[RMDB]
Annotation:
This 207-nucleotide RNA was probed chemically with 2A3 and DMS. It was measured as part of the RMDB library OK3TST.

RNA sequence: GGGAACGACUCGAGUAGAGUCGAAAAUGCCAUUAAUGUCUAGUCUUGGUGGAUCUGAUGCAGAUGAACUCUCAUUUAAGUACCUUUUGCAACAACCUAAUUAUAUAGAUAGUUUUUCAUAUAGUAGUACAAUAACCUCCCCAACUACCAUUUGGUCGUCUUACAGAAUUUUCGAAUUCUGUAAGACAAAAGAAACAACAACAACAAC
Reactivity to 2A3 in 0.01 (KOAc 150mM, MgCl2 10mM, bicine 150mM(pH8.5), 24C), signal-to-noise 4, nucleotides 027 to 156: u060g010c010c010a040u060u100a030a060u080g020u000c020u030a040g030u020c020u040u060g030g010u060g030g060a060u040c060u050g020a030u060g030c080a030g030a100u040g040a080a070c000u010c000u000c090a070u020u060u120a130a020g020u070a080c020c000u040u060u070u060g010c040a040a030c010a030a010c030c010u120a160a100u250u040a150u070a050u060a160g020a060u060a050g040u030u050u030u080u160c020a020u120a010u030a100g050u030a010g010u010a030c050a080a060u130a140a040c020c040u020c010c010c000c000a010a010c010u030a030c000c000a060u070u110u050g030g010u040c060
Reactivity to DMS in 0.01 (KOAc 150mM, MgCl2 10mM, bicine 150mM(pH8.5), 24C), signal-to-noise 1, nucleotides 027 to 156: u010g020c010c030a080u000u010a070a060u020g020u010c010u000a110g010u010c050u010u010g000g020u000g030g010a060u020c050u020g000a160u010g020c040a080g030a140u000g010a090a090c050u010c030u020c060a150u010u000u010a060a060g030u010a080c020c010u000u010u000u030g010c030a070a130c040a090a050c050c010u000a020a120u010u000a100u000a220u010a160g010a080u000a130g010u000u000u000u000u000c020a100u000a120u000a100g010u010a010g030u000a060c020a030a090u020a100a160c060c030u010c030c040c010c040a090a040c030u000a040c040c000a170u020u000u010g030g030u000c100
The RNA was probed in 150 mM KOAc, 10 mM MgCl2 and 150 mM bicine (pH 8.5) at 24 C.